Source: RMDB library M2RFPK, as collected in RNAgym.
The record gives the reactivity of an RNA of 207 nucleotides to 2A3 and DMS.
For DMS, 3,280 sequencing reads were counted.
RNA sequence: GGGAACGACUCGAGUAGAGUCGAAAAUUGGCGAAUGCCUGUGGAUCUACAUUUGUUGCGGGUUCGAGACCCGUCCGAGCCCGGCUCUGUAGCUCAAUGGUAGAGCGGUGUAUUCACAUAAACUUGUAAAAGACACGUGCCUUCGGGCACGUGUCAAUCUUAAUCGAAUGUUCGCAUUCGAUUAAGAAAAAGAAACAACAACAACAAC
Reactivity to 2A3 in 0.01 (KOAc 150mM, MgCl2 10mM, bicine 150mM(pH8.5), 24C), signal-to-noise 2, nucleotides 027 to 156: u050u060g000g020c050g140a280a060u300g020c000c020u000g030u010g040g020a030u000c080u030a000c020a080u150u120u090g060u070u090g050c000g000g000g000u000u010c000g020a020g100a220c040c040c050g020u010c010c010g010a000g000c000c010c000g050g000c000u000c000u120g110u080a080g010c030u050c060a090a140u200g160g060u140a040g000a000g040c020g000g010u000g000u000a040u010u020c020a010c000a030u210a050a130a120c070u110u100g040u140a020a090a070a010g000a000c000a000c000g010u000g000c000c000u020u050c100g040g000g010c040a000c000g010u000g000u000c000a000a000
Reactivity to DMS in 0.01 (KOAc 150mM, MgCl2 10mM, bicine 150mM(pH8.5), 24C), signal-to-noise 1, nucleotides 027 to 156: u000u000g000g000c020g000a080a030u010g000c000c040u020g020u000g010g010a110u000c060u000a040c030a030u010u000u000g040u010u000g000c000g010g040g020u000u000c020g010a240g000a050c020c050c020g020u010c070c000g030a050g000c010c000c000g010g020c030u030c080u070g040u000a140g000c040u000c040a080a190u010g000g000u000a070g010a090g030c010g030g080u000g020u010a050u010u010c020a030c030a110u000a040a080a110c090u020u020g010u010a070a080a110a150g000a020c010a030c000g040u000g030c000c000u000u010c300g050g000g000c000a000c000g000u000g000u010c010a000a000
Source information: The RNA was probed in 150 mM KOAc, 10 mM MgCl2 and 150 mM bicine (pH 8.5) at 24 C. For 2A3 the reverse transcriptase was SuperScript II with manganese. The 2A3 profile rests on 780 reads.